[RMDB]
RNA sequence: GGGAACGACUCGAGUAGAGUCGAAAAUCAGCACCGCCAGGGCGCUACGACCGGUGCGUUGCACGUAGCGUCGCGACAGAACUGCGUUUGCCGAUACGGGCGGGGGGCCGAAUUGUAAGCGCGUCACAAUAAUAGAACGAUUCGUCGUUCUAUUAUUAAAAGAAACAACAACAACAAC
Reactivity to DMS in 0.01 (KOAc 150mM, MgCl2 10mM, bicine 150mM(pH8.5), 24C), signal-to-noise 9, nucleotides 027 to 126: u020c060a110g010c060a060c090c020g010c060c070a120g010g010g000c010g000c010u000a020c020g010a130c120c070g010g010u010g010c070g010u010u030g010c080a150c030g000u010a030g000c020g020u000c010g020c070g000a090c090a070g010a100a110c090u020g010c030g010u000u010u020g010c010c040g010a100u020a090c110g000g000g010c030g000g000g000g000g000g010c020c020g000a070a070u020u010g010u010a050a070g000c040g000c040g010u010c080a080c170
Reactivity to 2A3 in 0.01 (KOAc 150mM, MgCl2 10mM, bicine 150mM(pH8.5), 24C), signal-to-noise 9, nucleotides 027 to 126: u100c020a010g030c020a020c020c020g040c050c030a070g020g020g000c010g000c010u020a010c010g090a090c040c070g060g050u110g040c100g050u060u170g050c070a030c060g020u030a010g000c000g020u010c020g010c020g060a040c040a080g090a110a050c050u100g010c010g030u030u060u090g030c010c010g030a040u040a140c030g040g020g000c020g010g000g000g010g030g000c010c010g040a040a050u070u060g040u060a050a050g010c020g000c010g090u070c020a040c020
Structure probing data (DMS and 2A3) for a 177-nucleotide construct. For DMS the reverse transcriptase was MarathonRT. The RNA was probed in 150 mM KOAc, 10 mM MgCl2 and 150 mM bicine (pH 8.5) at 24 C.